An RNA of 177 nucleotides, treated with DMS and 2A3 and read out base by base.
In probing experiments dimethyl sulfate is read out at A N1 and C N3, which are open when not base-paired.
RNA sequence: GGGAACGACUCGAGUAGAGUCGAAAAUUGGCCUUGGCUAAACUGACCCACCCACAAUUUAUCCAAAAAAUUUAUCCACCUAACCCCAGAUCACUGCAAACGAAAUGUAUAUCACUAUUCACGCGUGUAAUUGGAUCAGUUUCGACUGAUCCAAUUAAAAAGAAACAACAACAACAAC
Reactivity to DMS in 0.01 (KOAc 150mM, MgCl2 10mM, bicine 150mM(pH8.5), 24C), signal-to-noise 5, nucleotides 027 to 126: u010u020g000g000c020c010u030u010g020g030c040u010a020a050a070c050u010g010a080c050c030c040a100c050c010c050a100c080a050a030u010u010u010a040u050c040c060a010a050a090a070a060a080u030u030u010a080u020c040c040a050c010c020u000a100a120c060c000c020c010a070g000a060u000c060a010c060u010g020c050a060a080a110c100g010a060a040a110u020g030u010a070u020a060u020c060a060c020u010a080u010u000c040a030c080g000c110g020u020g010
Reactivity to 2A3 in 0.01 (KOAc 150mM, MgCl2 10mM, bicine 150mM(pH8.5), 24C), signal-to-noise 8, nucleotides 027 to 126: u030u060g060g020c000c010u030u050g040g000c040u080a040a080a050c050u060g080a100c000c010c000a020c000c030c000a050c040a060a050u080u100u090a070u080c040c020a050a020a010a030a030a030u150u180u110a100u050c020c010a020c010c030u030a060a060c010c010c000c000a000g020a030u050c020a020c050u050g000c030a040a100a050c050g090a050a060a040u060g040u020a050u010a010u110c010a010c040u040a050u070u080c040a020c120g060c020g040u050g020
The RNA was probed in 150 mM KOAc, 10 mM MgCl2 and 150 mM bicine (pH 8.5) at 24 C. DMS adducts were read by reverse transcription with MarathonRT.